[RMDB]
Notes:
Chemical mapping of a 177-nucleotide RNA with 2A3 and DMS. 2A3 adducts were read by reverse transcription with SuperScript II with manganese. For 2A3, 15,284 sequencing reads were counted.
RNA sequence: GGGAACGACUCGAGUAGAGUCGAAAACACCUGCAGCUCGAAGCUGCUGUUGCUUAGGAACAUCUGUGUCAACGUCGUGGCAAACUGGUUGAUGGCGUGCAGGAACUCCCUGUGGGGUGAGCGGCCGCCACAUAAUUGAUUUCGAUCAAUUAUGUGGAAAAGAAACAACAACAACAAC
Reactivity to 2A3 in 0.01 (KOAc 150mM, MgCl2 10mM, bicine 150mM(pH8.5), 24C), signal-to-noise 8, nucleotides 027 to 126: c060a050c010c010u050g010c000a010g000c000u100c160g180a190a030g000c030u020g010c050u020g100u070u100g010c020u080u160a070g060g040a080a050c020a120u020c040u070g100u030g070u150c020a040a040c060g050u040c040g030u090g020g010c020a080a050a140c070u080g050g060u080u080g070a110u090g060g010c060g030u070g000c010a010g010g070a050a050c030u050c010c010c020u030g080u150g020g040g000g010u060g020a030g020c030g020g020c000c020g020
Reactivity to DMS in 0.01 (KOAc 150mM, MgCl2 10mM, bicine 150mM(pH8.5), 24C), signal-to-noise 9, nucleotides 027 to 126: c170a130c030c020u000g020c010a030g010c010u000c210g010a120a150g010c010u000g000c030u000g000u000u000g010c050u000u000a100g010g010a090a070c090a080u000c060u000g010u000g010u000c040a060a070c060g010u000c090g020u000g010g010c070a050a080a090c070u000g010g010u000u000g000a100u000g000g010c040g020u010g010c020a040g000g010a170a100c090u000c030c010c050u000g010u010g010g000g000g010u000g000a100g010c060g000g010c040c080g010